[RMDB]
This 177-nucleotide RNA was probed chemically with 2A3 and DMS.
DMS adducts were read by reverse transcription with MarathonRT.
RNA sequence: GGGAACGACUCGAGUAGAGUCGAAAACGGUGAAGCAGUGGGAGGCACUGAAGGGCACACCGCUGGAGGGAGACGCGCUGAACACGGUGGCGUACCUCGCAGUGGCGCGCCGCCUCAGCGACCCGGCGACAUGUGCUUGGUUCGCCAAGCACAUGUCAAAAGAAACAACAACAACAAC
Reactivity to 2A3 in 0.01 (KOAc 150mM, MgCl2 10mM, bicine 150mM(pH8.5), 24C), signal-to-noise 3, nucleotides 027 to 126: c020g050g000u100g030a070a010g040c040a030g030u100g080g130g020a070g050g010c020a000c080u080g060a110a050g050g010g000c030a000c000a000c030c010g000c000u020g030g020a060g010g060g010a170g040a050c050g000c000g000c030u020g050a130a040c270a050c210g020g010u020g040g010c000g000u030a050c000c000u030c040g130c050a040g030u060g060g020c000g000c000g000c000c010g000c000c000u030c000a010g010c020g010a050c000c000c000g020g040c040
Reactivity to DMS in 0.01 (KOAc 150mM, MgCl2 10mM, bicine 150mM(pH8.5), 24C), signal-to-noise 3, nucleotides 027 to 126: c060g010g030u010g000a090a120g020c050a070g000u010g030g020g010a100g020g000c040a130c070u010g000a080a040g010g000g050c030a090c030a080c040c040g040c030u000g010g000a130g000g000g020a100g020a060c080g030c010g000c000u000g000a100a130c240a110c110g010g010u000g000g010c020g010u000a080c010c000u020c120g010c140a040g010u000g020g020c030g020c030g020c000c010g010c010c010u000c020a000g000c020g000a170c040c020c040g020g000c140
For 2A3 the reverse transcriptase was SuperScript II with manganese.